[RMDB]
RNA sequence: GGGAACGACUCGAGUAGAGUCGAAAAGAUAUGGAACUCCUAGCUGAUGACCUAUGCUAAUACUCGGAAACGAGAACAACAUAGCAAGGCUAUGAGUUCCUAAGUCAAAGGUCAGUUCGCUGACCAACAAUCUACUCGUCUUCGGACGAGUAGAUUGAAAAGAAACAACAACAACAAC
Reactivity to DMS in 0.01 (KOAc 150mM, MgCl2 10mM, bicine 150mM(pH8.5), 24C), signal-to-noise 2, nucleotides 027 to 126: g000a030u000a130u000g000g010a030a000c000u000c000c030u000a010g000c000u010g000a070u000g000a060c300c000u010a010u000g000c010u000a080a220u000a160c010u020c020g000g000a010a040a080c000g000a000g000a060a160c110a030a100c010a010u000a000g030c010a040a060g020g010c000u000a010u000g020a010g010u000u000c000c010u000a010a120g000u030c020a100a080a120g000g020u000c000a000g010u000u010c300g010c000u000g000a020c000c000a080a080
Reactivity to 2A3 in 0.01 (KOAc 150mM, MgCl2 10mM, bicine 150mM(pH8.5), 24C), signal-to-noise 2, nucleotides 027 to 126: g010a010u050a010u050g000g020a010a000c000u010c000c020u000a000g000c000u040g020a300u070g010a110c000c010u020a000u010g000c030u100a170a100u170a300c010u000c010g030g020a000a000a000c020g030a000g060a020a100c140a040a020c010a000u000a000g040c030a030a300g020g000c000u000a000u020g010a010g000u000u040c000c000u000a000a000g000u000c010a110a000a150g010g000u000c000a010g000u060u150c280g010c170u010g000a000c000c000a010a020
This 177-nucleotide RNA was probed chemically with DMS and 2A3. For DMS the reverse transcriptase was MarathonRT. The 2A3 profile rests on 3,060 reads. The reactions ran in a buffer of 150 mM KOAc, 10 mM MgCl2 and 150 mM bicine (pH 8.5), at 24 C. 2A3 adducts were read by reverse transcription with SuperScript II with manganese. Reactivities are given for positions 27 through 126. Reactivities are rounded to 0.1 and cut off at 0 and 3.